[RMDB]
RNA sequence: GGGAACGACUCGAGUAGAGUCGAAAACACUGUGCGCAACGCAGAUAUUCGCGCCAUCGAAGUAGCCACCGCCAAAGCUUUCCCCGGCAUCGAACACACGUGGUGUGGGCAGUGGCUGCUGCGUGCCGACUAGGGUAUGAUUCGUCAUACCCUAGUCAAAAGAAACAACAACAACAAC
Reactivity to 2A3 in 0.01 (KOAc 150mM, MgCl2 10mM, bicine 150mM(pH8.5), 24C), signal-to-noise 6, nucleotides 027 to 126: c050a020c050u080g030u090g080c030g020c080a080a080c030g010c050a030g060a130u130a130u100u120c050g000c030g010c050c010a100u130c030g050a040a000g000u020a000g010c000c000a000c010c010g000c010c010a090a090a070g010c030u070u140u130c000c010c000c000g010g000c010a060u150c110g110a130a030c030a000c000a000c130g300u230g110g050u010g100u020g010g030g000c010a000g000u010g000g000c000u000g010c000u010g000c000g020u040g050c040c030
Reactivity to DMS in 0.01 (KOAc 150mM, MgCl2 10mM, bicine 150mM(pH8.5), 24C), signal-to-noise 7, nucleotides 027 to 126: c100a140c120u010g020u000g020c040g010c100a100a110c090g000c070a050g010a120u010a100u010u000c070g010c120g020c040c130a050u010c050g000a070a030g010u000a010g020c010c010a010c020c030g020c010c020a090a120a120g000c030u000u010u010c020c010c000c080g010g000c020a100u010c150g000a070a250c020a030c020a030c040g030u010g030g020u000g030u000g010g000g020c010a030g020u000g000g010c010u000g000c000u000g020c020g020u000g000c120c130
An RNA of 177 nucleotides, treated with 2A3 and DMS and read out base by base.
The RNA was probed in 150 mM KOAc, 10 mM MgCl2 and 150 mM bicine (pH 8.5) at 24 C.
It was measured as part of the RMDB library OK2TRN.
For DMS, 11,824 sequencing reads were counted.
The 2A3 profile rests on 20,835 reads.